The record gives the reactivity of an RNA of 177 nucleotides to 2A3. The 2A3 profile rests on 927 reads. 2A3 adducts were read by reverse transcription with SuperScript II with manganese. High 2A3 reactivity points to a flexible backbone, as in loops and unpaired stretches. Reactivities are given for positions 27 through 126. The RNA was probed in 150 mM KOAc, 10 mM MgCl2 and 150 mM bicine (pH 8.5) at 24 C.
RNA sequence: GGGAACGACUCGAGUAGAGUCGAAAAGAUAUGGAUCAUUGUCUUAUAGACAGUCACAUCGGAAACGAUGUGAGCCGAAAGAGAAUGAUCCUAAGUCAAAACCGGAAUGGCUUCGGCCAUUCCGGAAGUGAGUGAGACACUUCGGUGUCUCACUCACAAAAGAAACAACAACAACAAC
Reactivity to 2A3 in 0.01 (KOAc 150mM, MgCl2 10mM, bicine 150mM(pH8.5), 24C), signal-to-noise 1, nucleotides 027 to 126: g000a030u000a000u040g010g000a000u000c000a000u000u160g260u100c020u080u180a300u220a300g180a110c060a020g030u010c000a010c000a010u010c000g050g000a030a030a010c020g010a000u000g000u000g010a000g000c030c020g300a300a220a000g020a000g000a010a020u020g030a000u000c000c000u000a070a000g070u020c020a050a000a120a200c000c000g010g030a000a020u000g000g060c000u120u170c300g110g000c000c000a010u000u000c020c000g000g000a020a000